[RMDB]
RNA sequence: GGGAACGACUCGAGUAGAGUCGAAAAGAAAGAAAGAAAGCUGACCCUUCUGCUGACGGAUCUUGUGGAGCACCACAGUGCAGAAGGGGAGAGAAGCUUUAAUGCCCACCGUCUGGGCAGCCUUGAAAAAACGGAUUCUUCUUCGGAAGAAUCCGAACUCGAAUCAUUAGUUCGCUAAUGAUUCGAGAAAAGAAACAACAACAACAAC
Reactivity to 2A3 in 0.01 (KOAc 150mM, MgCl2 10mM, bicine 150mM(pH8.5), 24C), signal-to-noise 3, nucleotides 027 to 156: g060a010a100a000g070a030a080a030g090a070a050a010g010c050u050g120a100c010c000c000u020u000c020u010g000c040u080g030a030c050g040g000a070u120c040u170u120g000u030g050g040a150g160c090a130c070c000a010c000a030g030u040g040c000a000g000a000a020g000g000g000g000a000g010a000g010a030a000g000c010u050u030u070a090a060u110g000c010c000c000a040c020c010g060u040c040u030g000g000g000c010a000g020c000c020u050u150g110a100a050a010a010a020a030c010g020g000a010u000u000c000u000u000c000u000u060c080g070g000a000a000g010a000a000u000c000c000g000a000a000
Reactivity to DMS in 0.01 (KOAc 150mM, MgCl2 10mM, bicine 150mM(pH8.5), 24C), signal-to-noise 2, nucleotides 027 to 156: g000a120a050a140g000a100a070a060g000a110a040a030g020c000u000g010a090c000c000c000u000u000c010u000g030c030u000g010a210c080g000g010a120u000c070u010u000g050u010g020g010a200g030c230a090c000c010a040c010a080g020u000g000c020a020g000a030a030g000g000g020g000a030g010a100g000a110a040g000c010u020u000u000a120a090u000g010c000c000c000a020c020c240g010u000c140u000g000g000g050c000a060g000c020c040u000u000g010a000a070a070a060a110a140c000g010g000a030u000u000c000u010u000c010u000u000c300g050g000a040a040g000a000a000u010c000c000g010a010a030